Conditions: 150 mM KOAc, 10 mM MgCl2 and 150 mM bicine (pH 8.5), 24 C.
Structure probing data (DMS and 2A3) for a 177-nucleotide construct.
[RMDB]
RNA sequence: GGGAACGACUCGAGUAGAGUCGAAAACAGGUCAAGACCAUGCAGCGCAACUGGAUCGGGCGUUCGACGGGUGCGGUGGCGCUGUUCUCGGCGAGAGCGGCCAGCGAUGACGGGUUCGAAGUCGACACUGCAGGUGAUGAUUCGUCAUCACCUGCAGAAAAGAAACAACAACAACAAC
Reactivity to DMS in 0.01 (KOAc 150mM, MgCl2 10mM, bicine 150mM(pH8.5), 24C), signal-to-noise 1, nucleotides 027 to 126: c110a150g000g000u000c020a110a060g000a160c110c010a110u000g000c050a010g000c070g050c090a090a040c080u010g000g000a080u010c020g050g000g020c020g060u020u000c140g030a140c020g010g000g020u000g000c110g050g000u000g000g000c070g050c010u010g000u020u010c040u000c120g000g010c110g000a150g010a170g000c060g000g040c000c010a050g000c030g020a080u020g030a180c100g010g000g030u000u000c020g000a060a030g020u000c000g000a110c060a070
Reactivity to 2A3 in 0.01 (KOAc 150mM, MgCl2 10mM, bicine 150mM(pH8.5), 24C), signal-to-noise 3, nucleotides 027 to 126: c030a030g000g070u050c030a110a010g040a060c030c000a040u080g000c000a020g020c020g010c010a000a070c030u020g060g030a070u010c000g040g080g000c050g090u140u120c070g090a050c050g020g000g040u080g110c020g000g030u020g020g000c030g000c000u000g000u040u000c040u030c020g090g000c100g040a050g010a010g070c050g020g010c000c000a040g060c040g020a060u090g040a050c000g010g030g000u010u080c050g080a080a030g060u030c020g000a020c040a020